RNA sequence: GGGAACGACUCGAGUAGAGUCGAAAAAGUCUUUUAGGGGCAUCCACUGAUCCUAAAACAACAUUUUCAUCUUUAGUGACGCUGACUUCCUGGGCUCAAGAAAACCCUCAGACCUUCUUGCCCAUUAUAAUUAAUGCCAGUUCGCUGGCAUUAAUUAAAAAGAAACAACAACAACAAC
Reactivity to DMS in 0.01 (KOAc 150mM, MgCl2 10mM, bicine 150mM(pH8.5), 24C), signal-to-noise 1, nucleotides 027 to 126: a120g010u010c120u000u000u010u000a040g000g020g020g010c070a060u000c050c060a070c080u010g010a020u000c010c020u010a010a070a060a030c150a100a040c070a090u010u000u000u000c050a110u000c070u000u000u010a060g000u000g000a080c060g000c020u000g010a110c120u000u000c020c030u000g020g010g010c060u000c070a040a070g000a050a070a060a070c070c010c020u000c130a100g010a050c040c020u010u000c020u010u000g010c020c000c000a160u000u000a060
The record gives the reactivity of an RNA of 177 nucleotides to DMS. It was measured as part of the RMDB library OK2TST.